RNA sequence: GGGAACGACUCGAGUAGAGUCGAAAAUCCAAGUGAUGGCCGAUAUUAUUGGGCCUAAAGCGUCCGUAGCUUGCUGUGUAAGUCCAUUGGGAAAUCGACCAGCUCAACUGGUCGGCGUCCGGUGGAAUUCGAGUGUAGUCUUCGGACUACACUCGAAAAAAGAAACAACAACAACAAC
Reactivity to 2A3 in 0.01 (KOAc 150mM, MgCl2 10mM, bicine 150mM(pH8.5), 24C), signal-to-noise 1, nucleotides 027 to 126: u010c000c000a090a000g060u030g110a090u060g000g080c030c020g140a080u010a030u300u020a050u120u160g120g000g070c000c000u030a010a010a000g000c020g060u050c040c030g110u110a010g050c060u000u080g000c000u060g000u010g000u170a010a020g040u000c010c000a000u010u180g200g000g000a000a060a000u020c000g000a000c000c000a000g000c020u020c050a000a270c000u000g010g010u010c020g000g010c000g030u000c000c040g000g000u040g000g020a090a040
Reactivity to DMS in 0.01 (KOAc 150mM, MgCl2 10mM, bicine 150mM(pH8.5), 24C), signal-to-noise 2, nucleotides 027 to 126: u000c010c020a060a080g010u030g000a260u000g000g000c010c010g080a100u000a060u000u070a090u010u000g000g010g050c000c040u000a020a190a140g020c160g000u020c190c110g000u000a140g020c130u000u000g000c010u030g000u000g050u060a050a050g000u000c000c000a030u010u000g000g060g000a070a030a000u000c010g010a020c000c000a010g000c240u050c300a090a210c000u000g000g000u000c000g000g000c300g000u050c000c000g000g030u000g000g000a050a110